Conditions: 150 mM KOAc, 10 mM MgCl2 and 150 mM bicine (pH 8.5), 24 C. This 177-nucleotide RNA was probed chemically with DMS and 2A3. The data come from the RNA Mapping Database (RMDB), library OK2TRN. As a SHAPE reagent, 2A3 marks flexible, mostly unpaired nucleotides at the ribose 2'-OH. 2A3 adducts were read by reverse transcription with SuperScript II with manganese.

[RMDB]
RNA sequence: GGGAACGACUCGAGUAGAGUCGAAAAGCAAAAACGGCGGCGCAGUCGACGCCAUAAGCAGCACAGUGUUACACAAGAGGAUGCUGUGGAUGCGGCGCCCAUUGCAGCGGACAUCGAUGUAGAUGUGCCUCGUUAGUGUUUUCGAACACUAACGAGGAAAAGAAACAACAACAACAAC
Reactivity to DMS in 0.01 (KOAc 150mM, MgCl2 10mM, bicine 150mM(pH8.5), 24C), signal-to-noise 2, nucleotides 027 to 126: g010c050a040a010a060a100a070c190g030g010c030g000g010c020g050c030a040g030u010c150g010a070c140g000c010c030a040u000a040a120g000c010a090g000c050a020c030a030g000u000g000u010u000a070c070a110c150a180a090g020a180g000g000a040u000g000c000u020g010u020g000g010a080u000g020c010g010g010c040g000c020c010c120a100u000u000g020c050a100g020c050g000g000a050c030a020u000c020g010a210u010g020u020a030g000a060u000g010u010g030
Reactivity to 2A3 in 0.01 (KOAc 150mM, MgCl2 10mM, bicine 150mM(pH8.5), 24C), signal-to-noise 3, nucleotides 027 to 126: g040c030a030a000a050a050a010c060g070g000c020g060g050c020g010c030a030g060u150c040g060a120c060g000c020c000a030u070a080a050g000c000a000g010c010a010c000a030g010u000g030u110u220a140c140a020c080a150a180g100a120g190g000a030u010g000c020u020g000u030g040g000a100u020g000c020g040g030c010g010c000c010c000a020u040u100g050c050a030g040c060g070g050a020c010a030u010c010g130a140u270g070u250a090g000a030u020g030u090g070